The data come from the RNA Mapping Database (RMDB), library OK2TRN. This 177-nucleotide RNA was probed chemically with 2A3 and DMS. Values cover nucleotides 27 to 126. For DMS, 1,194 sequencing reads were counted. Values are in units of 0.01, from 0 to 300, in steps of 10.
[RMDB]
RNA sequence: GGGAACGACUCGAGUAGAGUCGAAAAAUAAUGCCUAAGGUCAUCACAAGAUCAAGGUACAAUGGUAUCCAAGAAGUCCCAGAGUUGGAGAUCAUACCAAUUUCCAAGUUAUCCAAUGACACUAUACCACAACGUACUUGUUCGCAAGUACGUUGUGAAAAGAAACAACAACAACAAC
Reactivity to 2A3 in 0.01 (KOAc 150mM, MgCl2 10mM, bicine 150mM(pH8.5), 24C), signal-to-noise 2, nucleotides 027 to 126: a000u140a020a060u090g010c010c000u080a170a110g010g030u000c000a080u070c050a030c050a260a030g000a020u030c020a000a010g030g000u020a040c090a030a070u050g020g020u030a020u070c030c020a070a020g090a060a020g080u030c010c010c000a010g030a000g200u000u020g020g000a000g000a040u020c020a030u050a080c010c010a040a030u030u040u010c020c010a050a050g050u010u050a080u060c030c010a060a110u100g030a020c020a020c160u090a070u100a170c070
Reactivity to DMS in 0.01 (KOAc 150mM, MgCl2 10mM, bicine 150mM(pH8.5), 24C), signal-to-noise 2, nucleotides 027 to 126: a120u010a110a100u000g000c000c010u000a100a090g040g010u000c010a050u000c210a080c280a200a060g000a040u000c050a110a080g020g000u000a050c130a140a100u010g010g000u010a020u000c060c070a060a060g000a130a130g010u000c000c000c010a180g020a100g020u000u000g000g020a070g000a020u000c090a080u010a100c090c060a060a090u000u000u000c000c010a030a060g010u000u000a060u000c030c070a090a070u000g000a100c070a060c090u000a040u000a130c120